[RMDB]
RNA sequence: GGGAACGACUCGAGUAGAGUCGAAAAGAUAUGGAACUUGAAGCGAGGUACGGUCGGAAACGACCGAUACUAGUCGCCAAGUUCCUAAGUCAAAUCUGCUUAUUAAGCUUCGGCUUAAUAAGCAGAAGUAUAACGUCACGUUCGCGUGACGUUAUACAAAAGAAACAACAACAACAAC
Reactivity to DMS in 0.01 (KOAc 150mM, MgCl2 10mM, bicine 150mM(pH8.5), 24C), signal-to-noise 2, nucleotides 027 to 126: g000a010u010a050u000g000g000a000a000c000u010u000g010a130a130g040c010g020a020g010g000u000a010c010g020g000u000c000g030g020a000a010a050c000g010a000c000c000g000a040u000a000c000u010a090g000u000c000g010c020c000a010a000g000u000u000c000c010u000a000a080g010u000c010a110a160a240u010c000u000g000c000u000u000a000u000u000a000a010g010c000u000u010c280g030g010c010u000u010a000a000u020a000a010g000c000a000g000a010a060
Reactivity to 2A3 in 0.01 (KOAc 150mM, MgCl2 10mM, bicine 150mM(pH8.5), 24C), signal-to-noise 2, nucleotides 027 to 126: g000a010u020a000u040g010g000a000a000c010u020u010g070a300a050g080c010g020a060g030g000u010a000c000g010g000u000c000g030g000a030a010a000c010g000a000c010c030g010a010u000a000c000u040a180g240u010c000g000c010c000a000a000g000u000u000c000c000u020a000a000g000u010c020a010a050a270u030c000u010g000c020u010u000a000u010u000a000a000g000c000u030u100c300g150g030c000u030u020a000a000u050a000a000g020c000a000g000a010a000